[RMDB]
RNA sequence: GGGAACGACUCGAGUAGAGUCGAAAAGAUCUAGCACUCGAUCACAUGGUACGAUCAUGCUAGGCUAGUCGUACGAUCCGCUCUAGUGAUCGGAUCUCGCGCUAGUACGUACUACGCUAGGGAUCUAGCAGAUCGGUUGUUUCGACAACCGAUCUGCAAAAGAAACAACAACAACAAC
Reactivity to DMS in 0.01 (KOAc 150mM, MgCl2 10mM, bicine 150mM(pH8.5), 24C), signal-to-noise 2, nucleotides 027 to 126: g010a150u010c000u000a000g010c010a050c300u000c100g030a090u010c040a180c120a230u000g030g010u000a050c100g010a050u000c100a110u000g010c020u000a040g020g030c050u000a070g020u010c040g020u010a080c100g000a040u000c000c000g010c120u010c030u000a110g020u010g020a040u000c000g000g010a060u020c000u010c060g000c090g000c070u000a000g020u000a070c110g030u000a030c050u000a040c110g020c020u000a110g000g020g000a080u000c000u000a080
Reactivity to 2A3 in 0.01 (KOAc 150mM, MgCl2 10mM, bicine 150mM(pH8.5), 24C), signal-to-noise 2, nucleotides 027 to 126: g030a010u040c010u040a010g060c030a030c060u120c130g050a130u090c030a050c050a160u290g080g020u170a060c010g000a030u100c060a040u180g000c030u010a020g040g020c020u020a010g070u200c010g000u030a100c040g000a000u010c000c000g090c000u000c050u090a220g110u170g210a070u030c000g020g020a000u000c030u020c070g050c000g000c030u000a000g020u010a010c050g010u050a000c000u010a000c040g040c010u030a020g030g050g020a000u130c030u020a030
This 177-nucleotide RNA was probed chemically with DMS and 2A3. For DMS the reverse transcriptase was MarathonRT. The DMS profile rests on 1,151 reads. The 2A3 profile rests on 1,241 reads.